[RMDB]
Chemical mapping of a 207-nucleotide RNA with DMS and 2A3. The 2A3 profile rests on 1,607 reads. The DMS profile rests on 1,769 reads. For DMS the reverse transcriptase was MarathonRT. The data come from the RNA Mapping Database (RMDB), library M2RFPK. The reactions ran in a buffer of 150 mM KOAc, 10 mM MgCl2 and 150 mM bicine (pH 8.5), at 24 C.

RNA sequence: GGGAACGACUCGAGUAGAGUCGAAAAGAUUCCUCGUUGUUGAGCGAGGUUUAAACAAAUCGACCACACAAACGUAGAGCCGACUAUGGAUUUAUAAAUUAAGGCAUUAAGUGUGAUAAGGAGACAAAAAACGAUGUUGUGUUCGCACAACAUCGAACCCAUAACUUGUCUUCGGACAAGUUAUGGGAAAAGAAACAACAACAACAAC
Reactivity to DMS in 0.01 (KOAc 150mM, MgCl2 10mM, bicine 150mM(pH8.5), 24C), signal-to-noise 2, nucleotides 027 to 156: g000a300u000u000c000c000u000c070g000u030u020g010u010u000g000a120g010c020g020a060g010g000u000u000u000a110a050a100c170a000a060a160u000c000g000a050c000c000a060c000a300c020a050a090a070c110g010u000a130g030a070g030c020c000g010a100c100u000a190u000g010g030a200u000u000u000a140u010a110a070a110u000u000a090a300g000g030c000a080u000u010a100a190g030u000g010u000g020a110u000a090a090g020g000a300g020a120c040a000a010a090a130a040a160c020g020a010u000g010u000u000g030u000g000u000u050c300g000c000a050c000a000a000c010a000u000c000g000a000a050
Reactivity to 2A3 in 0.01 (KOAc 150mM, MgCl2 10mM, bicine 150mM(pH8.5), 24C), signal-to-noise 3, nucleotides 027 to 156: g090a050u180u180c000c000u000c000g000u000u020g020u010u000g010a000g020c000g000a000g010g000u060u060u050a010a020a000c030a000a000a000u020c000g010a000c000c000a010c000a010c010a000a270a030c020g030u050a020g000a010g100c010c010g050a010c060u070a020u060g110g000a030u060u230u110a160u230a090a090a020u140u110a020a030g030g010c000a040u150u210a110a080g000u010g000u010g000a020u020a060a050g170g060a030g030a060c150a060a150a000a000a010a030c010g000a000u000g000u000u000g000u000g000u040u050c090g030c060a000c000a000a010c000a010u000c000g000a000a000